An RNA of 207 nucleotides, treated with 2A3 and DMS and read out base by base. Conditions: 150 mM KOAc, 10 mM MgCl2 and 150 mM bicine (pH 8.5), 24 C.
RNA sequence: GGGAACGACUCGAGUAGAGUCGAAAACAUUUACGUUCCAUACUGGUGUAAGGAGUCAUUUAGAACACUUGUUGCGCGGGCAAAACAGUUGACAGCAACAGGACGCACCAAAACUCUUGAUAACUGGCAUUAUCAGUGUUGCUCUAAAACUGUUAAAUGCUCCUAGAGUUUUCGAACUCUAGGAGCAAAAAGAAACAACAACAACAAC
Reactivity to 2A3 in 0.01 (KOAc 150mM, MgCl2 10mM, bicine 150mM(pH8.5), 24C), signal-to-noise 2, nucleotides 027 to 156: c020a010u120u190u270a090c070g030u100u020c000c000a000u040a130c080u120g020g010u070g010u080a070a070g040g070a030g060u050c020a080u000u140u290a090g080a160a110c080a020c030u030u000g040u010u070g000c140g000c070g030g030g000c010a020a020a080a170c000a030g000u000u000g030a020c000a030g000c020a020a000c000a010g020g000a100c040g020c000a000c010c070a030a020a090a050c040u070c060u080u090g010a030u070a050a040c040u040g120g000c010a130u010u020a030u130c000a030g020u000g010u010u020g000c010u000c000u130a060a170a020a010c010u030g020u030u070a010a050a030
Reactivity to DMS in 0.01 (KOAc 150mM, MgCl2 10mM, bicine 150mM(pH8.5), 24C), signal-to-noise 1, nucleotides 027 to 156: c070a160u000u000u000a140c050g010u060u050c000c020a250u000a060c020u000g050g000u010g010u000a090a100g000g000a050g050u000c020a140u000u030u030a080g020a180a130c040a080c060u000u000g030u000u040g020c050g010c080g030g020g010c070a050a060a070a020c040a080g010u040u000g030a130c090a110g000c010a030a150c020a190g020g000a040c010g000c080a150c100c250a060a080a110a070c080u000c060u000u000g000a090u000a050a040c050u070g060g020c030a140u000u000a000u010c000a070g030u000g040u000u000g020c060u000c050u010a070a100a010a050c000u000g010u000u000a070a000a000